RNA sequence: GGGAACGACUCGAGUAGAGUCGAAAAUACGCUGGUAGCAGCAAGUAGCAGCUCAAUCCGCAGAUGAGCGGAAUAUACAGAUGAUAAUGGAUCUCGAUAGAGCUGCUACAAUCGAGACCAUUAGAGACACGUAGGUAUCGUUCGCGAUACCUACGUGAAAAGAAACAACAACAACAAC
Reactivity to DMS in 0.01 (KOAc 150mM, MgCl2 10mM, bicine 150mM(pH8.5), 24C), signal-to-noise 2, nucleotides 027 to 126: u030a100c150g000c010u000g000g000u040a130g020c000a010g050c020a120a240g000u000a010g030c000a000g000c000u020c060a280a150u030c000c000g020c070a040g030a070u020g020a120g000c000g020g020a040a070u030a120u100a210c160a120g010a130u000g040a090u000a030a000u000g000g000a130u040c000u000c000g020a060u030a120g000a030g030c000u000g010c010u010a000c000a000a050u000c000g000a000g000a010c000c000a000u000u000a000g000a170g000a130
Reactivity to 2A3 in 0.01 (KOAc 150mM, MgCl2 10mM, bicine 150mM(pH8.5), 24C), signal-to-noise 5, nucleotides 027 to 126: u140a040c070g000c000u020g030g120u180a150g220c010a010g000c010a020a070g000u020a000g000c000a000g010c000u030c020a040a080u010c000c000g000c010a030g190a300u220g110a050g020c010g000g000a000a000u100a000u000a000c130a020g200a220u120g060a040u120a080a000u080g050g030a200u000c000u000c000g010a020u070a090g010a010g000c000u000g000c000u000a000c000a000a010u010c000g000a000g010a000c000c000a000u030u030a070g060a000g020a050

Structure probing data (DMS and 2A3) for a 177-nucleotide construct. Reactivities are given for positions 27 through 126. For DMS, 2,524 sequencing reads were counted. For 2A3, 4,361 sequencing reads were counted. It was measured as part of the RMDB library OK1LIB.